[RMDB]
RNA sequence: GGGAACGACUCGAGUAGAGUCGAAAAUAGCGUCGGUGGGCGUCGUGCCCUGGGUUGAUGGCCGCCGUUACGCGCGGUUCCGGCACGCUUCACGGAUCGUUCCGGACGACUCCGACGGGACACGUCGCAAUGCCCUGCGUUUCGACGCAGGGCAUUGAAAAGAAACAACAACAACAAC
Reactivity to DMS in 0.01 (KOAc 150mM, MgCl2 10mM, bicine 150mM(pH8.5), 24C), signal-to-noise 2, nucleotides 027 to 126: u030a100g010c000g020u010c030g010g030u010g010g000g040c030g000u010c000g010u010g000c010c010c080u020g000g010g040u000u000g000a110u010g010g000c030c040g000c010c010g020u000u020a080c160g030c170g040c060g010g000u000u000c000c000g000g040c090a020c050g030c110u010u010c070a160c250g000g000a060u000c050g010u000u000c030c010g000g000a170c080g010a100c040u000c010c070g000a110c060g000g010g000a060c090a040c040g000u000c060g000
Reactivity to 2A3 in 0.01 (KOAc 150mM, MgCl2 10mM, bicine 150mM(pH8.5), 24C), signal-to-noise 1, nucleotides 027 to 126: u090a000g060c020g010u000c010g070g070u060g070g060g020c010g020u060c010g020u050g040c020c000c070u180g010g030g000u020u110g060a100u110g090g000c000c030g000c010c020g040u060u160a140c090g010c000g010c020g080g000u120u020c000c000g000g040c020a010c000g040c020u060u100c060a080c200g100g010a030u040c030g030u040u000c000c000g000g000a010c000g010a010c040u030c050c010g040a060c060g000g000g030a090c050a000c040g070u000c030g030

Source: RMDB library OK2TRN, as collected in RNAgym. Structure probing data (DMS and 2A3) for a 177-nucleotide construct. The reactions ran in a buffer of 150 mM KOAc, 10 mM MgCl2 and 150 mM bicine (pH 8.5), at 24 C. In probing experiments dimethyl sulfate is read out at A N1 and C N3, which are open when not base-paired. For 2A3, 1,619 sequencing reads were counted. For 2A3 the reverse transcriptase was SuperScript II with manganese.